[RMDB]
RNA sequence: GGGAACGACUCGAGUAGAGUCGAAAACCGCACUUCUUCGGAAGUGCGGAAAUACCGAGAUUGUACCUCGGUAGAAGUUCAUAACCCUUGGAAACAAGGGAAAAAGCGUGAGCUUCGGCUCACGCAAUCUUUCUAAAGGGUUCGCCCUUUAGAAAGAAAAAGAAACAACAACAACAAC
Reactivity to 2A3 in 0.01 (KOAc 150mM, MgCl2 10mM, bicine 150mM(pH8.5), 24C), signal-to-noise 1, nucleotides 027 to 126: c000c000g000c000a000c000u000u020c010u030u030c080g170g010a010a010g010u000g010c010g000g010a010a010a010u040a000c000c000g000a000g020a020u200u290g050u170a080c020c000u020c000g000g000u000a010g020a040a020g080u100u130c040a070u120a230a180c020c000c000u000u000g030g000a030a090a050c010a000a000g000g000g000a070a010a000a030a000g010c000g020u000g000a000g000c000u020u040c190g070g010c010u010c010a000c030g000c000a000a010
Reactivity to DMS in 0.01 (KOAc 150mM, MgCl2 10mM, bicine 150mM(pH8.5), 24C), signal-to-noise 3, nucleotides 027 to 126: c010c000g030c000a020c010u000u000c000u000u000c200g030g000a010a000g000u000g010c010g000g000a010a020a060u000a000c000c000g000a010g010a070u010u010g010u010a300c100c000u010c000g000g000u000a000g010a100a140g000u000u000c040a090u020a090a150c010c000c010u000u010g020g010a130a090a210c000a000a000g010g000g030a000a020a050a140a070g010c010g020u000g000a020g000c000u000u010c190g010g010c000u000c000a000c000g020c000a000a020
Structure probing data (2A3 and DMS) for a 177-nucleotide construct. DMS adducts were read by reverse transcription with MarathonRT. Source: RMDB library M2PK50, as collected in RNAgym. The reactions ran in a buffer of 150 mM KOAc, 10 mM MgCl2 and 150 mM bicine (pH 8.5), at 24 C.